[RMDB]
RNA sequence: GGGAACGACUCGAGUAGAGUCGAAAACACUCUACGCCUUUCCUUUCAAUGGGUUGGUAUGAUUUAAUAAGGAUGCAAGAGAAUAGUACGGGAAGUUCGAAGACUUGCGGAUUUGCUUCCACGGCUCAUCACGAUAAUGGUUCGCCAUUAUCGUGAUAAAAGAAACAACAACAACAAC
Reactivity to DMS in 0.01 (KOAc 150mM, MgCl2 10mM, bicine 150mM(pH8.5), 24C), signal-to-noise 5, nucleotides 027 to 126: c200a100c040u000c010u000a080c070g010c060c120u000u010u010c010c010u010u020u010c140a120a080u020g010g010g010u000u010g020g010u010a040u020g000a090u010u020u020a070a080u020a080a060g010g000a090u020g000c070a090a050g000a070g010a090a060u010a030g010u000a030c030g020g010g000a030a050g010u010u030c070g010a050a050g010a120c040u000u020g010c150g000g000a180u000u000u010g000c050u000u010c010c010a050c050g000g000c030u010c200
Reactivity to 2A3 in 0.01 (KOAc 150mM, MgCl2 10mM, bicine 150mM(pH8.5), 24C), signal-to-noise 8, nucleotides 027 to 126: c020a010c000u060c020u040a040c040g020c010c030u040u070u060c010c000u040u110u190c110a130a110u170g070g000g020u050u020g030g020u100a100u130g080a080u070u100u170a150a140u150a100a030g050g010a020u080g040c020a040a030g020a000g040a170a090u100a070g050u030a050c020g010g010g020a040a010g020u050u130c060g050a050a020g030a090c040u060u130g050c070g040g010a060u030u020u070g020c000u010u000c010c000a040c050g020g000c020u010c040